[RMDB]
RNA sequence: GGGAACGACUCGAGUAGAGUCGAAAACGAGCGGGUAUCGCCAGUCACGCUGGGGAAGUCAUGCGUUGUUUUAUCCCACGCCACGCGACGUGGAUCGCCGUGUUGAAGUACCUGUUUUAGCGCGCGCUACUACUCGGGGGUUCGCCCCCGAGUAGUAAAAAGAAACAACAACAACAAC
Reactivity to DMS in 0.01 (KOAc 150mM, MgCl2 10mM, bicine 150mM(pH8.5), 24C), signal-to-noise 2, nucleotides 027 to 126: c030g010a040g020c020g000g020g000u010a110u000c020g020c030c030a050g020u000c210a100c240g040c030u000g000g000g000g020a010a300g000u000c030a050u010g020c090g000u000u010g010u000u000u020u000a190u000c020c010c000a130c100g000c020c010a060c040g000c090g020a070c070g000u000g010g020a030u020c060g000c050c000g030u020g020u000u000g010a080a120g000u000a070c070c110u000g000u000u000u000u000a110g030c050g020c050g020c120g010c080
The data come from the RNA Mapping Database (RMDB), library OK2TST. Structure probing data (DMS) for a 177-nucleotide construct. DMS adducts were read by reverse transcription with MarathonRT.